RNA sequence: GGGAACGACUCGAGUAGAGUCGAAAACAAUUUUUUGAUUGGCUUGUAACUCUAUAAUCCUAUCCACUAAGAGCAUGGGAUAGCGGUGAGGUAAAAUCUGUAAGAUAUGCUCUAUAAAAAAUUGAGACUUUCUAUGUAGAUUCGUCUACAUAGAAAGAAAAGAAACAACAACAACAAC
Reactivity to 2A3 in 0.01 (KOAc 150mM, MgCl2 10mM, bicine 150mM(pH8.5), 24C), signal-to-noise 3, nucleotides 027 to 126: c020a020a010u050u060u030u000u060u190g090a060u040u060g030g000c040u040u050g060u120a150a060c010u040c020u150a060u100a190a050u030c000c010u010a010u030c010c000a080c100u070a160a010g020a000g040c010a020u030g000g000g010a020u020a020g030c080g040g040u020g000a040g080g040u060a050a030a050a190u020c020u070g140u130a080a020g010a100u060a020u080g010c010u020c060u030a150u250a100a040a020a030a000a010u120u100g020a050g030a040
Reactivity to DMS in 0.01 (KOAc 150mM, MgCl2 10mM, bicine 150mM(pH8.5), 24C), signal-to-noise 3, nucleotides 027 to 126: c020a030a000u000u020u010u020u000u000g000a090u000u000g010g000c150u010u010g020u000a050a100c060u010c030u010a090u010a110a100u000c030c000u010a030u000c020c050a080c120u010a110a060g010a030g000c030a010u000g000g020g000a040u000a040g010c140g010g020u000g010a060g020g020u010a030a090a100a080u000c040u000g010u010a090a100g000a120u000a030u000g010c010u000c030u000a150u010a000a040a060a040a050a040u010u010g010a180g010a170
Chemical mapping of a 177-nucleotide RNA with 2A3 and DMS. Conditions: 150 mM KOAc, 10 mM MgCl2 and 150 mM bicine (pH 8.5), 24 C.